Source: RMDB library 15KLIB, as collected in RNAgym. Structure probing data (2A3 and DMS) for a 170-nucleotide construct. For DMS the reverse transcriptase was MarathonRT. For 2A3 the reverse transcriptase was SuperScript II with manganese.

[RMDB]
RNA sequence: GGGAACGACUCGAGUAGAGUCGAAAAGUCCCCACAUAGCAGCUCCCGGACCCCCUUCCAAAGAGACCGGGGGGGAGUUUGGAGCGCGGGGGGGACCGUCGGGUCCGUGGGAUGCCCUUCCCGAUUCACACCUAAGUCUUCGGACUUAGGAAAAGAAACAACAACAACAAC
Reactivity to 2A3 in 0.01 (KOAc 150mM, MgCl2 10mM, bicine 150mM(pH8.5), 24C), signal-to-noise 9, nucleotides 027 to 129: g010u010c010c000c030c000a070c000a030u140a020g020c110a040g010c000u080c020c030c010g040g030a050c010c010c010c010c010u090u140c060c020a120a180a050g250a070g070a130c100c130g010g000g000g000g000g000g000a130g030u030u030u050g000g000a000g010c000g000c010g020g010g010g000g000g000g000a000c010c000g110u120c050g010g000g010u020c050c050g060u140g030g050g010a060u170g020c000c000c000u000u010c000c000c000g000a090u120u080c040a040c010a010
Reactivity to DMS in 0.01 (KOAc 150mM, MgCl2 10mM, bicine 150mM(pH8.5), 24C), signal-to-noise 9, nucleotides 027 to 129: g020u020c020c000c000c030a070c050a060u070a100g040c050a030g010c020u020c050c010c080g020g030a060c020c000c010c010c010u070u000c020c020a080a130a150g050a150g040a140c200c120g000g020g000g010g000g000g000a070g020u020u020u020g020g020a050g010c000g000c010g000g010g010g000g000g000g000a030c020c020g030u030c170g020g010g020u030c020c060g010u070g000g040g010a070u060g030c010c010c020u000u000c000c020c020g040a090u050u050c070a080c160a150